[RMDB]
RNA sequence: GGGAACGACUCGAGUAGAGUCGAAAAACAGCACUGUAGUUUGGCUGAAGGAAUCUUUGUGAUGCUCAGUAAGAGUGGAUUGACAUGUGAAGCUUUCAUGAUUGAGUUAUUCCUUCAUCAUGGGGCCUCCUCAGGAGGACUUCGGUCCUCCUGAGGAAAAAGAAACAACAACAACAAC
Reactivity to DMS in 0.01 (KOAc 150mM, MgCl2 10mM, bicine 150mM(pH8.5), 24C), signal-to-noise 1, nucleotides 027 to 126: a140c140a110g000c100a040c080u000g000u030a030g030u020u030u020g060g000c080u000g000a070a050g000g010a050a020u000c040u030u020u000g030u020g000a070u040g010c010u000c010a090g000u010a080a060g000a120g010u000g010g000a050u030u000g000a090c040a110u100g000u010g000a140a230g010c010u000u000u070c020a030u000g030a040u000u030g000a020g000u000u010a070u000u030c070c010u000u000c100a070u010c030a070u000g000g000g000g010c020c050
Reactivity to 2A3 in 0.01 (KOAc 150mM, MgCl2 10mM, bicine 150mM(pH8.5), 24C), signal-to-noise 2, nucleotides 027 to 126: a000c060a020g130c040a020c120u160g040u090a150g110u140u300u190g060g030c010u000g000a000a010g080g080a090a060u020c070u120u110u160g030u130g040a060u120g010c000u020c110a050g070u120a090a020g010a020g030u040g000g010a060u060u100g070a010c090a070u210g010u060g080a080a020g000c010u000u090u230c100a060u080g090a020u190u000g020a010g030u050u130a000u080u020c010c000u020u060c000a050u020c000a010u070g000g000g100g000c000c000